RNA sequence: GGGAACGACUCGAGUAGAGUCGAAAACGUCUUAAAUUAAAUUUCCCUUGCUGAGCUCAUCUCAGCAAACAAUAACAAAUAACAAAUAAGAACAGGAGGGAAGGUUGUUCUUAUUUGUUACAAUUAACUAUCUUUAUUGCUUCGGCAAUAAAGAUAGAAAAGAAACAACAACAACAAC
Reactivity to DMS in 0.01 (KOAc 150mM, MgCl2 10mM, bicine 150mM(pH8.5), 24C), signal-to-noise 1, nucleotides 027 to 126: c270g010u000c070u000u020a080a000a210u000u000a060a180a120u020u000u000c000c000c020u000u000g020c000u000g010a000g000c270u020c300a130u020c010u000c000a000g060c050a010a000a080c090a070a050u030a040a070c160a070a060a250u000a000a000c000a000a000a000u000a000a030g000a010a010c020a020g010g020a060g010g020g020a050a040g000g000u000u000g000u000u000c000u000u010a000u010u000u000g010u000u010a000c140a080a050u040u000a040a130
Reactivity to 2A3 in 0.01 (KOAc 150mM, MgCl2 10mM, bicine 150mM(pH8.5), 24C), signal-to-noise 5, nucleotides 027 to 126: c020g040u050c070u160u220a140a180a210u090u110a100a100a110u090u160u020c000c000c000u000u010g000c000u000g010a010g000c070u060c180a190u160c120u000c010a000g030c010a010a000a010c010a020a060u200a040a040c040a080a120a020u040a010a000c010a000a000a000u010a010a010g000a000a000c000a000g110g070a040g010g110g080a040a050g060g020u020u000g000u000u020c010u000u010a010u010u010u000g000u000u000a000c010a020a070u130u070a040a040